[RMDB]
This 177-nucleotide RNA was probed chemically with 2A3. Conditions: 150 mM KOAc, 10 mM MgCl2 and 150 mM bicine (pH 8.5), 24 C. For 2A3, 402 sequencing reads were counted.
RNA sequence: GGGAACGACUCGAGUAGAGUCGAAAAUGUGUGAGUGUGCGCGCUUGGAGCGUGUUAGGCGAGUGCGUGCGCCCACCCCUGCGCCCCUCCUCCCGCUUACACUUUGAUCUUAUUUGAUCGGAUCGUGAUGGAUUCCCGCAUUCGUGCGGGAAUCCAUAAAAGAAACAACAACAACAAC
Reactivity to 2A3 in 0.01 (KOAc 150mM, MgCl2 10mM, bicine 150mM(pH8.5), 24C), signal-to-noise 1, nucleotides 027 to 126: u120g030u000g000u080g000a090g000u100g060u000g050c000g000c070g000c000u120u170g010g030a230g010c140g050u030g030u040u060a100g020g020c030g000a000g010u090g040c030g000u010g000c000g080c000c000c000a030c010c000c000c000u000g000c000g000c010c020c000c000u000c000c000u000c000c000c000g000c000u070u060a080c040a060c040u110u100u130g010a000u080c000u000u130a300u140u220u150g000a000u190c000g000g110a130u060c000g000u050g000